[RMDB]
An RNA of 177 nucleotides, treated with 2A3 and DMS and read out base by base. DMS (dimethyl sulfate) methylates the pairing face of unpaired adenines and cytosines.
RNA sequence: GGGAACGACUCGAGUAGAGUCGAAAAUCUUCAACCACGAUAGGAAGCACCGACUCAUCAUCAAACUGCACGUAGGCGAUUCCUUUCGACUGAUGUGUACGACGACUGCGAACACAGAAGCAGUUGAACGUGGAUUAUUAUUCGUAAUAAUCCACGUAAAAGAAACAACAACAACAAC
Reactivity to 2A3 in 0.01 (KOAc 150mM, MgCl2 10mM, bicine 150mM(pH8.5), 24C), signal-to-noise 9, nucleotides 027 to 126: u040c010u130u100c030a070a070c040c040a060c070g060a050u070a080g050g040a040a020g030c030a030c050c010g080a070c030u020c040a110u020c010a050u040c060a130a090a100c060u070g010c040a010c090g030u040a020g020g020c030g060a080u070u070c020c000u050u060u030c070g070a140c030u030g050a080u070g050u020g020u070a060c060g070a030c030g030a030c090u050g010c030g050a160a020c110a010c020a160g090a140a010g010c010a010g000u010u020g030a020
Reactivity to DMS in 0.01 (KOAc 150mM, MgCl2 10mM, bicine 150mM(pH8.5), 24C), signal-to-noise 9, nucleotides 027 to 126: u020c030u020u030c040a090a110c100c080a130c080g010a060u020a050g020g010a070a080g020c080a080c030c010g000a070c050u000c030a070u020c080a080u030c140a060a070a140c140u010g010c050a070c060g010u010a080g000g020c060g010a090u010u010c030c030u000u000u000c020g000a100c050u000g010a060u010g010u000g010u020a070c090g010a120c070g010a040c080u030g010c010g000a070a070c130a100c160a080g010a120a100g010c050a030g010u000u000g000a070

For DMS the reverse transcriptase was MarathonRT. Source: RMDB library OK1LIB, as collected in RNAgym. The RNA was probed in 150 mM KOAc, 10 mM MgCl2 and 150 mM bicine (pH 8.5) at 24 C.